[RMDB]
RNA sequence: GGGAACGACUCGAGUAGAGUCGAAAAGUCCCCAGUAUGACGUUAAACUGCUGACACAUACAUACUGACACCGGUUGCUCAACAGGCUGUGUGGGACAAUAGAAUAACAAGGCUGUCAAUUUGAGCUAAAACUCCUCGGGGUUCGCCCCGAGGAGAAGAUGUUUACUACGUUCGCGUAGUAAACAUCAAAAGAAACAACAACAACAAC
Reactivity to 2A3 in 0.01 (KOAc 150mM, MgCl2 10mM, bicine 150mM(pH8.5), 24C), signal-to-noise 2, nucleotides 027 to 156: g050u020c010c010c030c000a000g010u010a000u090g030a050c040g040u040u040a050a080a090c060u130g030c040u060g060a020c030a000c000a090u250a020c000a010u050a020c010u070g050a030c010a030c060c070g150g010u100u110g020c000u020c020a000a020c020a030g130g000c000u020g020u010g000u030g110g010g020a020c040a000a060u100a090g120a090a040u090a070a030c030a050a030g060g030c020u040g030u100c020a040a110u060u050u120g040a010g000c030u040a090a120a030a050c000u000c010c000u000c000g000g000g020g010u050u030c130g100c000c000c000c000g000a000g000g000a000g000a000a000
Reactivity to DMS in 0.01 (KOAc 150mM, MgCl2 10mM, bicine 150mM(pH8.5), 24C), signal-to-noise 1, nucleotides 027 to 156: g000u000c030c000c010c000a020g010u000a020u010g000a030c050g010u000u000a030a080a130c040u000g000c030u010g010a130c090a060c060a080u000a100c060a100u000a100c090u000g010a140c030a100c040c020g010g000u000u010g000c050u000c000a120a140c090a080g010g020c010u000g000u000g000u000g000g030g020a140c090a240a100u050a140g030a060a100u020a010a060c070a060a090g060g000c020u000g040u000c030a040a100u000u000u000g020a140g040c000u000a030a040a070a210c010u000c000c000u000c010g000g040g050g040u010u000c290g010c060c000c000c030g010a020g000g020a010g000a000a060